[RMDB]
Overview:
An RNA of 207 nucleotides, treated with 2A3 and DMS and read out base by base. For 2A3, 361 sequencing reads were counted. For 2A3 the reverse transcriptase was SuperScript II with manganese.
RNA sequence: GGGAACGACUCGAGUAGAGUCGAAAAAACAACCACAAUACAAGCCAUAAUGCAAAGAAUGGUUCAGGCAGUAAGUUGUUAAAGUACAAAUGAUAAAGACAUUACAUCGGGAUUUGAGGACCUGGAAAAGGAAUGAAGCUGCCUAGCUGCCCUUGUGAAUGUCCUGGAUAUUCGUAUCCAGGACAUUAAAAGAAACAACAACAACAAC
Reactivity to 2A3 in 0.01 (KOAc 150mM, MgCl2 10mM, bicine 150mM(pH8.5), 24C), signal-to-noise 1, nucleotides 027 to 156: a000a000c070a100a080c040c000a060c060a040a020u270a140c000a020a000g080c000c000a040u110a220a110u240g030c110a040a000a190g060a190a080u000g010g000u110u050c010a010g010g010c000a000g040u080a230a090g000u010u020g010u050u160a000a200a000g060u170a040c020a000a080a100u080g060a020u110a220a000a070g080a000c020a020u090u150a010c000a050u020c000g030g030g030a070u160u020u150g070a010g020g020a010c010c010u000g040g030a000a130a000a000g100g030a010a010u050g010a080a000g060c050u050g010c000c000u000a010g000c000u020g000c000c000c000u020u150g000u060g080
Reactivity to DMS in 0.01 (KOAc 150mM, MgCl2 10mM, bicine 150mM(pH8.5), 24C), signal-to-noise 2, nucleotides 027 to 156: a090a010c030a130a060c030c020a070c030a090a090u000a080c060a080a160g020c000c020a020u000a060a100u000g000c170a120a190a130g000a160a020u000g010g010u000u000c030a100g000g000c030a030g010u010a110a280g030u000u010g020u030u000a010a070a150g020u010a160c040a120a030a080u000g020a130u010a070a050a110g000a070c070a040u000u000a040c060a090u000c080g010g030g010a080u000u000u000g030a070g030g010a030c050c000u010g060g000a110a090a030a060g000g030a080a080u000g000a080a090g030c020u000g000c030c060u010a140g030c010u000g020c000c040c030u010u010g000u000g000